[RMDB]
RNA sequence: GGGAACGACUCGAGUAGAGUCGAAAAUCACUCUCCUGGUUCUGAAACCAGUCCGCGCUCAACCCUCAGAUACCGUCUCUAACCCUUUCCUCUUCCUGAGCUGACCCAGUUCUGUGAAAGUUCAUAGGAAGAUUACGCUUUUCGAAGCGUAAUCUUCAAAAGAAACAACAACAACAAC
Reactivity to 2A3 in 0.01 (KOAc 150mM, MgCl2 10mM, bicine 150mM(pH8.5), 24C), signal-to-noise 1, nucleotides 027 to 126: u050c000a020c020u050c000u050c020c000u010g060g000u030u050c030u160g110a200a050a010c010c000a000g020u010c000c010g010c000g020c030u040c000a080a090c020c010c010u060c010a010g010a040u080a030c020c050g080u000c030u000c010u050a060a130c000c010c020u040u050u050c050c000u040c000u050u000c000c020u010g020a010g040c000u030g100a150c000c030c040a050g010u110u000c020u060g090u030g050a050a050a040g020u090u030c030a050u110a040g110
Reactivity to DMS in 0.01 (KOAc 150mM, MgCl2 10mM, bicine 150mM(pH8.5), 24C), signal-to-noise 2, nucleotides 027 to 126: u020c090a130c090u000c030u000c030c010u000g010g020u000u010c100u010g020a080a100a050c050c050a060g000u000c010c050g000c080g030c040u000c060a100a120c060c030c020u000c030a070g010a080u020a040c050c020g010u000c030u000c040u010a110a130c040c040c020u000u000u000c040c000u000c040u000u000c010c000u010g000a080g020c020u000g000a180c070c040c020a080g020u010u010c020u000g030u000g010a050a080a110g010u010u020c020a080u000a150g030
Chemical mapping of a 177-nucleotide RNA with 2A3 and DMS. The data come from the RNA Mapping Database (RMDB), library OK2TST. Values cover nucleotides 27 to 126. For 2A3, 1,199 sequencing reads were counted. For 2A3 the reverse transcriptase was SuperScript II with manganese.